Overview
Structure probing data (2A3) for a 177-nucleotide construct.
RNA sequence: GGGAACGACUCGAGUAGAGUCGAAAAGGCGUCCUUCGCGUUUAAGCUUGGUCAGGAGGGCGCUCAGGGCGGCGACGUUGGUCGGGCCGUCGUUGGUCAGGGCGUUGGCUCGAUGGCGGGCGAGGACGCGAUGGGUGCGUUUCGACGCACCCAUCGCAAAAGAAACAACAACAACAAC
Reactivity to 2A3 in 0.01 (KOAc 150mM, MgCl2 10mM, bicine 150mM(pH8.5), 24C), signal-to-noise 1, nucleotides 027 to 126: g160g040c000g000u000c000c000u000u040c000g000c000g000u110u090u030a070a000g000c000u020u070g220g040u050c000a000g080g000a020g000g020g070c000g000c000u000c000a000g000g020g020c000g040g000c000g000a000c000g070u010u080g130g040u080c030g000g010g040c020c000g020u030c020g000u000u050g090g130u020c060a150g000g000g030c020g020u050u150g140g000c000u000c030g110a180u030g000g060c060g020g000g000c030g000a080g030g020a000c020
The 2A3 profile rests on 702 reads. Values cover nucleotides 27 to 126.